The record gives the reactivity of an RNA of 207 nucleotides to 2A3 and DMS. The data come from the RNA Mapping Database (RMDB), library OK3TST. The reactions ran in a buffer of 150 mM KOAc, 10 mM MgCl2 and 150 mM bicine (pH 8.5), at 24 C. DMS adducts were read by reverse transcription with MarathonRT.

RNA sequence: GGGAACGACUCGAGUAGAGUCGAAAAUCUUACAAGUACACGCCAGCCAACAUCACCCUGCCCACCAACACCAACACUUAUGAUUACAUGAACGGGAGAGUGGUGCCUCCCUCGCUGGUGGACGCCUACAUCAACAUCGGGGCGCGCUGGUCGCUGGGUCAUUACCAUACUUCGGUAUGGUAAUGACAAAAGAAACAACAACAACAAC
Reactivity to 2A3 in 0.01 (KOAc 150mM, MgCl2 10mM, bicine 150mM(pH8.5), 24C), signal-to-noise 4, nucleotides 027 to 156: u050c020u040u110a070c050a160a020g080u030a060c050a010c070g010c030c010a040g020c030c050a100a100c020a130u090c040a030c040c000c020u100g000c040c050c000a020c010c030a040a030c040a020c030c050a120a100c050a050c130u140u130a080u300g150a160u180u230a070c060a090u170g090a140a030c060g010g030g000a000g010a010g000u020g000g010u000g030c020c020u000c010c020c000u000c030g060c040u000g000g000u020g030g040a030c070g040c010c020u100a130c020a090u120c060a130a140c010a170u160c080g010g000g010g000c030g000c040g000c040u020g000g000u100c080g050c070u040g000g000
Reactivity to DMS in 0.01 (KOAc 150mM, MgCl2 10mM, bicine 150mM(pH8.5), 24C), signal-to-noise 1, nucleotides 027 to 156: u000c070u040u050a110c110a030a100g020u010a090c030a120c000g020c010c000a030g000c020c050a080a090c070a130u000c010a020c030c030c060u020g020c010c000c020a110c060c020a070a090c080a010c070c020a070a090c010a100c050u000u020a130u020g020a190u000u000a060c090a060u000g020a100a100c140g000g000g000a070g000a020g020u000g030g020u000g000c140c000u000c000c000c010u000c070g050c010u000g030g030u010g020g050a130c070g010c090c000u030a030c020a070u000c060a060a040c040a130u000c090g060g020g040g030c020g060c070g060c000u000g040g040u000c110g000c020u000g020g000